Chemical mapping of a 177-nucleotide RNA with 2A3 and DMS. The reactions ran in a buffer of 150 mM KOAc, 10 mM MgCl2 and 150 mM bicine (pH 8.5), at 24 C. It was measured as part of the RMDB library OK2TST. For DMS, 1,964 sequencing reads were counted. Values cover nucleotides 27 to 126. DMS adducts were read by reverse transcription with MarathonRT. For 2A3 the reverse transcriptase was SuperScript II with manganese.
[RMDB]
RNA sequence: GGGAACGACUCGAGUAGAGUCGAAAAACAUCACGGCUCCAACUAAGCUCGGUAUCGAUAACUUUGUUGCAGCUCUAAGAUCAUAGUUGCACGAAAGUAGAUCACGGGUGGUCUUGAUGAGCAGAAACGUGAUUUUAUGGUUCGCCAUAAAAUCACGAAAAGAAACAACAACAACAAC
Reactivity to 2A3 in 0.01 (KOAc 150mM, MgCl2 10mM, bicine 150mM(pH8.5), 24C), signal-to-noise 2, nucleotides 027 to 126: a000c030a030u070c040a020c130g050g000c010u000c050c010a060a000c120u250a090a020g010c000u010c000g000g040u090a010u030c030g030a090u030a280a000c010u030u010u050g170u190u080g040c030a010g010c000u000c040u130a120a060g060a160u140c060a070u080a030g010u010u020g010c010a000c050g080a000a040a000g020u050a040g010a060u000c010a000c010g050g000g000u020g000g050u020c030u030u090g060a160u090g020a020g000c010a030g230a070a140a000
Reactivity to DMS in 0.01 (KOAc 150mM, MgCl2 10mM, bicine 150mM(pH8.5), 24C), signal-to-noise 3, nucleotides 027 to 126: a090c140a040u010c030a080c060g000g000c010u000c020c070a050a070c060u000a180a190g000c000u000c020g000g000u000a010u000c030g010a110u000a080a060c030u000u000u000g010u000u000g080c030a030g010c000u000c140u020a110a150g020a140u010c150a120u000a010g010u000u000g040c020a020c070g030a020a010a060g000u000a250g000a010u000c080a030c000g000g010g030u010g000g000u000c120u000u000g000a070u000g000a070g040c040a110g000a080a060a180